This 177-nucleotide RNA was probed chemically with DMS and 2A3. For DMS the reverse transcriptase was MarathonRT. 2A3 adducts were read by reverse transcription with SuperScript II with manganese. Conditions: 150 mM KOAc, 10 mM MgCl2 and 150 mM bicine (pH 8.5), 24 C.
RNA sequence: GGGAACGACUCGAGUAGAGUCGAAAAGAUAUGGAGAUCGAUGACGCAUAGGAGGUCGGAAACGACUCCCCACCCUAUGAACUACGUCUAAGAUCUCCUAAGUCAAAGAGGAUCUUCGGAUCCUCAACACCCAUUAGAACUUCGGUUCUAAUGGGUGAAAAGAAACAACAACAACAAC
Reactivity to DMS in 0.01 (KOAc 150mM, MgCl2 10mM, bicine 150mM(pH8.5), 24C), signal-to-noise 3, nucleotides 027 to 126: g020a010u000a300u000g000g010a020g030a000u000c000g000a250u000g000a020c030g000c030a000u030a060g000g020a120g050g010u000c000g000g020a100a070a220c010g000a020c000u030c030c030c020c040a300c050c000c020u000a040u000g000a050a090c140u000a300c040g000u000c000u000a140a280g000a010u000c010u000c000c000u000a010a070g010u000c050a090a050a080g000a010g000g000a000u000c000u000u000c180g020g000a010u000c000c000u000c000a030a140
Reactivity to 2A3 in 0.01 (KOAc 150mM, MgCl2 10mM, bicine 150mM(pH8.5), 24C), signal-to-noise 3, nucleotides 027 to 126: g030a010u090a060u150g000g000a000g000a010u000c010g020a040u270g010a000c020g000c020a000u000a000g000g020a020g010g020u010c010g030g000a020a060a030c030g000a000c020u100c030c000c010c000a010c000c040c000u010a000u010g010a060a060c100u190a040c260g000u000c010u040a010a000g000a000u030c010u000c000c000u000a010a010g030u000c010a020a080a140g010a000g010g020a020u020c010u090u130c300g100g000a010u010c040c000u000c000a000a010